About this RNA: Conditions: 150 mM KOAc, 10 mM MgCl2 and 150 mM bicine (pH 8.5), 24 C. Chemical mapping of a 207-nucleotide RNA with 2A3. Values cover nucleotides 27 to 156. For 2A3, 4,050 sequencing reads were counted.
RNA sequence: GGGAACGACUCGAGUAGAGUCGAAAAAAGUCGCUCUCUCUCGCCCUGUACGUCCUCUCAGGCAUAGAGAUGACCAUUUGCCUAGGGUGAGUCUUUAAGUAGACACAGCCUAUCUAUGGUGACGUAUUGGGGCACGGGUUUUAACACCCCCGUGACGCGAAGGUUUAAGGUUCGCCUUAAACCUUCGAAAAGAAACAACAACAACAAC
Reactivity to 2A3 in 0.01 (KOAc 150mM, MgCl2 10mM, bicine 150mM(pH8.5), 24C), signal-to-noise 5, nucleotides 027 to 156: a000a000g050u020c010g010c010u020c000u000c020u030c030u050c120g060c010c000c010u000g000u010a000c000g010u000c010c000u020c010u060c180a030g020g000c020a040u080a030g130a010g030a100u170g120a120c050c030a110u070u040u030g010c010c000u010a010g030g010g010u000g000a000g000u000c000u000u120u070a300a300g290u060a010g010a000c000a000c010a000g000c000c000u080a130u240c010u020a040u130g020g000u010g010a000c000g000u000a020u090u300g010g000g000g000c010a010c000g000g000g010u000u030u050u140a100a050c040a050c020c010c000c000c020g020u020g030a020c050g000